Structure probing data (DMS and 2A3) for a 207-nucleotide construct. Source: RMDB library M2RFPK, as collected in RNAgym.
RNA sequence: GGGAACGACUCGAGUAGAGUCGAAAACUUAACUGGCCAGAUAAGAAAAGACCGAGAGGUUCAAGCUUAUAGGGCAGAAAGCGGGGGACAGCAGUACUAAACAUUCCCUGUGGCUGACACGAAGGUAAAAAGGGUCAUAACUUCGGUUAUGACCCAAUCGUUACAUAAUCUUCGGAUUAUGUAACGAAAAAGAAACAACAACAACAAC
Reactivity to DMS in 0.01 (KOAc 150mM, MgCl2 10mM, bicine 150mM(pH8.5), 24C), signal-to-noise 2, nucleotides 027 to 156: c040u000u000a120a140c060u000g000g020c000c000a180g000a060u010a040a060g010a040a160a300a260g020a020c000c010g000a250g030a300g030g020u010u000c050a070a250g000c020u000u000a030u000a100g000g000g020c020a070g010a060a030a050g030c050g010g040g000g030g030a150c060a040g000c050a070g000u000a270c080u010a080a090a050c040a180u000u010c000c030c010u000g010u010g000g010c000u000g000a140c040a060c090g010a060a070g000g010u000a030a040a130a080a140g010g040g020u030c020a030u010a020a020c000u000u000c250g030g030u000u010a010u000g000a030c020c000c000a000a000
Reactivity to 2A3 in 0.01 (KOAc 150mM, MgCl2 10mM, bicine 150mM(pH8.5), 24C), signal-to-noise 2, nucleotides 027 to 156: c020u040u030a070a040c030u030g170g000c000c010a030g020a190u030a060a010g040a020a120a020a010g020a010c020c010g030a030g000a020g060g030u110u090c060a020a020g000c000u050u040a040u060a050g000g020g000c030a000g070a030a050a000g030c040g000g010g000g000g010a000c010a030g020c000a010g040u090a060c060u130a060a110a050c000a000u030u050c010c010c000u030g010u030g040g030c040u030g020a000c000a000c170g090a090a040g050g000u200a090a020a020a020a040g020g010g000u000c000a000u010a000a000c000u060u040c160g090g000u000u000a000u000g010a000c000c000c000a000a000
The reactions ran in a buffer of 150 mM KOAc, 10 mM MgCl2 and 150 mM bicine (pH 8.5), at 24 C.